[RMDB]
This 207-nucleotide RNA was probed chemically with 2A3. The 2A3 profile rests on 846 reads.
RNA sequence: GGGAACGACUCGAGUAGAGUCGAAAAGGUCCGGUCGACGGUUCGGAGAGGACUACCUGAGAUGACCACACAGCGCGAGCGUGAUCGCCGGGCGCAGCCGAUGCCGACGGCGGCCGAGGCGGUCGCCGCAUACCGUGCCGGGCAGCAGUCACGGCCGCUCAUAGGAGAUCUUCGGAUCUCCUAUGAGAAAAGAAACAACAACAACAAC
Reactivity to 2A3 in 0.01 (KOAc 150mM, MgCl2 10mM, bicine 150mM(pH8.5), 24C), signal-to-noise 1, nucleotides 027 to 156: g050g010u020c000c000g050g000u080c070g130a040c020g000g000u110u020c050g010g050a100g010a060g120g030a020c060u080a090c020c050u050g060a110g020a210u110g060a070c030c040a070c030a020c030a060g090c060g000c000g060a050g000c040g050u070g010a030u000c020g000c020c000g000g030g030c110g050c160a030g010c000c000g020a010u140g120c080c040g070a070c010g050g010c010g000g010c000c000g000a210g070g010c000g000g000u020c000g000c000c000g030c010a030u100a060c020c020g020u060g000c010c010g020g030g000c010a050g070c040a000g040u110c030a020c130g020g000c000c010g010
Conditions: 150 mM KOAc, 10 mM MgCl2 and 150 mM bicine (pH 8.5), 24 C. The data come from the RNA Mapping Database (RMDB), library OK3TST.